[RMDB]
RNA sequence: GGGAACGACUCGAGUAGAGUCGAAAAUGCAUAAAGAGGAAGAUAGAACCACACAACUUUUAAUUUACUCAACUAAUACAUUUACUUGUAAUAAAAGCAGCAACAUUGUAGCUGGAAUCUGGAGUUGAAAACAAAUGUAAUCACAGGCUGUGUGACACUGAUGUCGAGAAUUCGUUCUCGACAUCAGAAAAGAAACAACAACAACAAC
Reactivity to DMS in 0.01 (KOAc 150mM, MgCl2 10mM, bicine 150mM(pH8.5), 24C), signal-to-noise 1, nucleotides 027 to 156: u000g030c000a060u000a020a060a090g000a130g000g030a050a070g010a140u000a130g030a110a160c030c040a080c050a080c000a040a140c080u000u010u030u000a080a110u000u000u000a050c050u030c010a040a140c040u000a100a120u000a070c000a030u000u000u000a100c050u000u000g010u010a080a060u000a000a090a130a120g000c010a130g010c040a040a100c070a040u030u010g030u000a040g030c030u050g000g050a070a140u000c110u000g030g020a050g010u000u000g000a030a050a080a100c030a060a030a070u000g000u000a070a060u000c050a070c100a100g020g040c020u000g050u030g000u020g000a130c100a100
Reactivity to 2A3 in 0.01 (KOAc 150mM, MgCl2 10mM, bicine 150mM(pH8.5), 24C), signal-to-noise 3, nucleotides 027 to 156: u090g010c020a020u080a040a050a040g040a030g050g030a030a010g010a060u110a050g050a040a020c030c000a020c010a010c020a080a080c060u150u100u150u280a150a180u080u080u160a080c020u060c090a050a030c040u070a090a130u040a080c020a040u080u100u050a110c160u090u100g020u080a040a060u040a150a150a060a000g020c010a000g000c000a000a070c040a110u110u110g050u060a000g000c010u000g000g090a020a050u030c050u060g060g000a030g010u060u070g060a060a090a010a000c040a010a060a040u100g000u050a000a020u050c060a040c040a080g090g000c030u010g020u020g010u020g050a010c000a010